Annotation:
Chemical mapping of a 177-nucleotide RNA with DMS and 2A3. The reactions ran in a buffer of 150 mM KOAc, 10 mM MgCl2 and 150 mM bicine (pH 8.5), at 24 C. It was measured as part of the RMDB library OK2TST.
RNA sequence: GGGAACGACUCGAGUAGAGUCGAAAACAGAGCUUGAGGGUACGAGGAAGAAGCUGGCGGAAUAUGAAGCCAAACUCGGUUUAAUUGGGAAGUGAUAUUCUGGCAGUGAAGCGCAGGAAGGCACUGCUAAAUUUUACUGGUUCGCCAGUAAAAUUUAAAAAGAAACAACAACAACAAC
Reactivity to DMS in 0.01 (KOAc 150mM, MgCl2 10mM, bicine 150mM(pH8.5), 24C), signal-to-noise 8, nucleotides 027 to 126: c110a090g010a090g010c070u010u010g010a110g010g010g020u000a050c080g010a070g010g000a090a080g000a080a140g020c080u000g010g010c040g010g000a080a060u000a060u000g000a120a130g010c020c030a030a060a120c090u010c080g020g010u000u010u010a060a120u000u010g010g010g010a080a070g010u010g000a060u000a070u000u000c030u000g000g010c010a020g000u000g010a070a090g020c100g010c070a050g000g000a080a070g010g000c050a040c050u010g000c100
Reactivity to 2A3 in 0.01 (KOAc 150mM, MgCl2 10mM, bicine 150mM(pH8.5), 24C), signal-to-noise 3, nucleotides 027 to 126: c020a010g040a020g070c030u070u100g040a050g050g050g010u070a030c050g020a030g070g020a110a070g030a030a020g050c030u020g030g040c010g030g010a020a030u110a030u110g070a080a010g020c000c000a020a030a090c080u060c050g050g020u020u140u110a130a070u090u070g020g000g020a050a030g080u050g090a030u030a040u160u040c010u030g060g000c000a010g000u000g100a060a010g030c070g010c040a000g020g040a040a020g030g010c000a000c060u020g000c030

For 2A3 the reverse transcriptase was SuperScript II with manganese. Reactivities are given for positions 27 through 126.